[RMDB]
RNA sequence: GGGAACGACUCGAGUAGAGUCGAAAAAACUGAGUUCGCUCAGUUAUAAGGUCCUAAGUCUUACGGGAGGGGAGCUCGACGAUCUAAUCGGAAACGAUUAGGGAGAGCUCACCUUUGAUCGUAAGAUAUGGAAGUACAUACCAGUUCGCUGGUAUAAACAUGAAAUGGAGUUCGCUCCAUUUCAUGUAAAAGAAACAACAACAACAAC
Reactivity to DMS in 0.01 (KOAc 150mM, MgCl2 10mM, bicine 150mM(pH8.5), 24C), signal-to-noise 2, nucleotides 027 to 156: a030a020c030u000g010a030g070u010u000c300g000c000u000c000a020g010u000u000a060u000a070a100g030g020u000c010c000u000a080a300g020u000c010u000u000a020c000g010g000g010a040g000g000g000g000a050g010c000u000c000g000a090c190g010a040u000c000u000a000a020u000c020g000g000a210a160a230c010g010a020u010u000a000g010g020g010a030g010a030g010c010u000c000a000c000c010u000u000u000g000a070u010c000g030u000a010a000g010a010u000a100u000g010g010a090a080g020u010a120c120a100u000a020c010c000a070g030u000u010c300g040c000u000g000g030u000a040u010a060a160
Reactivity to 2A3 in 0.01 (KOAc 150mM, MgCl2 10mM, bicine 150mM(pH8.5), 24C), signal-to-noise 3, nucleotides 027 to 156: a000a000c020u020g040a010g010u050u160c230g050c100u000c000a000g000u020u020a130u030a080a050g070g020u000c010c000u040a090a030g020u000c000u000u000a000c000g040g010g000a000g010g000g000g000a010g000c000u030c010g190a230c020g000a100u000c000u000a000a000u000c000g050g000a070a040a000c010g000a000u010u000a000g000g010g010a010g000a000g000c000u000c000a040c000c000u030u020u050g060a050u050c000g000u000a000a000g000a000u030a020u040g020g000a060a040g050u100a070c010a070u030a010c000c000a000g020u070u090c300g000c050u010g020g010u020a010u080a040a160
Structure probing data (DMS and 2A3) for a 207-nucleotide construct. For 2A3, 3,127 sequencing reads were counted. The DMS profile rests on 4,964 reads. The reactions ran in a buffer of 150 mM KOAc, 10 mM MgCl2 and 150 mM bicine (pH 8.5), at 24 C. The data come from the RNA Mapping Database (RMDB), library RNAMAK. DMS adducts were read by reverse transcription with MarathonRT.